[RMDB]
RNA sequence: GGGAACGACUCGAGUAGAGUCGAAAAACAACUGAAGCUCCCGAGAACCGCUUUUUCUCUAUCUUCUUUGCUUCGGGGCGAGGGUGUUUAGCCCUUGGAACCGCAGUUGGUUCCUCGGAACUAAACUCGUGGUUCCUGUGGUUCACACCUGACCUCCCACAAGUAUAGAGUUCGCUCUAUACUUGUGAAAAGAAACAACAACAACAAC
Reactivity to 2A3 in 0.01 (KOAc 150mM, MgCl2 10mM, bicine 150mM(pH8.5), 24C), signal-to-noise 4, nucleotides 027 to 156: a010c030a020a030c060u090g030a050a010g040c050u040c070c070c060g000a040g020a050a070c110c070g110c230u150u190u060u140u030c060u030c030u070a260u140c060u200u030c040u090u150u110g040c040u080u100c030g010g010g010g000c020g010a030g010g000g000u010g010u040u090u090a020g020c000c000c000u000u080g010g000a000a000c000c000g000c000a000g000u000u000g010g000u010u000c010c010u010c150g080g020a010a010c010u140a270a080a070c010u090c150g010u010g000g000u000u000c000c000u000g030u110g000g000u060u060c040a000c000a000c020c000u020g020a030c000c000u000c010c000